[RMDB]
RNA sequence: GGGAACGACUCGAGUAGAGUCGAAAAACAAGCUGCACGUGCGUGCGAGCAGUUUUCGAAAUCGCACGUUUCACGUAAAGACGCAACUCUACUCGUGAAAGCGAGUCACGCAGACAGCGUCAAGGAAACUAAGGUGCUGAUUCGUCAGCACCUUAGUAAAAGAAACAACAACAACAAC
Reactivity to DMS in 0.01 (KOAc 150mM, MgCl2 10mM, bicine 150mM(pH8.5), 24C), signal-to-noise 3, nucleotides 027 to 126: a080c110a060a100g000c030u000g010c110a040c030g040u000g010c060g010u000g000c000g010a020g000c130a130g020u010u020u000u020c100g010a030a090a100u000c010g020c030a020c020g010u010u000u020c030a020c020g010u010a060a090a070g010a060c020g020c050a080a120c090u000c020u000a080c010u000c000g010u000g000a070a090a120g000c020g000a040g000u000c190a050c150g000c090a030g000a070c140a110g010c000g000u000c030a120a100g000g010a080a090
Reactivity to 2A3 in 0.01 (KOAc 150mM, MgCl2 10mM, bicine 150mM(pH8.5), 24C), signal-to-noise 3, nucleotides 027 to 126: a000c040a060a000g060c030u060g000c060a020c020g070u050g020c000g030u000g000c010g010a050g030c080a050g030u060u000u180u240c040g040a020a060a080u000c000g020c010a010c010g010u020u080u140c040a020c020g040u050a060a070a030g010a010c020g000c010a000a080c010u000c020u040a010c000u000c010g020u040g020a080a030a010g000c010g000a010g020u070c040a020c160g030c030a010g040a120c050a020g020c000g000u000c020a010a060g140g010a140a100